[RMDB]
RNA sequence: GGGAACGACUCGAGUAGAGUCGAAAAUUCCUGAGCCUUGUACACACCGCCCGUCACGUCAUGGGAGCCGAGGGUGCCCGAAGCCGCCACGAUUCAGUGGUGUCCACGGCAAGAUCGGUGACUGGGACGCAGCGUCAGUUUUCGAACUGACGCUGCGAAAAGAAACAACAACAACAAC
Reactivity to 2A3 in 0.01 (KOAc 150mM, MgCl2 10mM, bicine 150mM(pH8.5), 24C), signal-to-noise 1, nucleotides 027 to 126: u060u010c000c000u000g050a000g000c000c000u030u080g050u080a000c050a030c000a020c030c050g000c000c000c000g030u140c020a000c100g000u000c040a040u040g000g030g000a010g010c000c010g010a020g000g100g000u030g000c000c010c000g010a020a000g010c020c000g040c000c000a000c000g160a090u300u280c030a060g040u020g020g000u000g020u010c000c000a030c000g000g000c020a000a000g090a010u000c000g010g000u000g050a080c040u070g010g010g050a000
Reactivity to DMS in 0.01 (KOAc 150mM, MgCl2 10mM, bicine 150mM(pH8.5), 24C), signal-to-noise 1, nucleotides 027 to 126: u000u000c020c000u010g040a110g020c020c000u000u000g000u090a000c000a030c010a120c000c030g000c000c000c000g010u070c010a070c000g000u020c000a040u000g080g000g000a300g000c000c000g000a160g000g040g020u000g000c000c000c020g000a070a060g000c090c070g000c000c000a020c000g000a030u010u070c260a000g090u000g000g030u000g010u000c000c000a300c300g000g030c000a000a030g020a050u000c000g000g060u100g000a300c020u000g010g010g010a130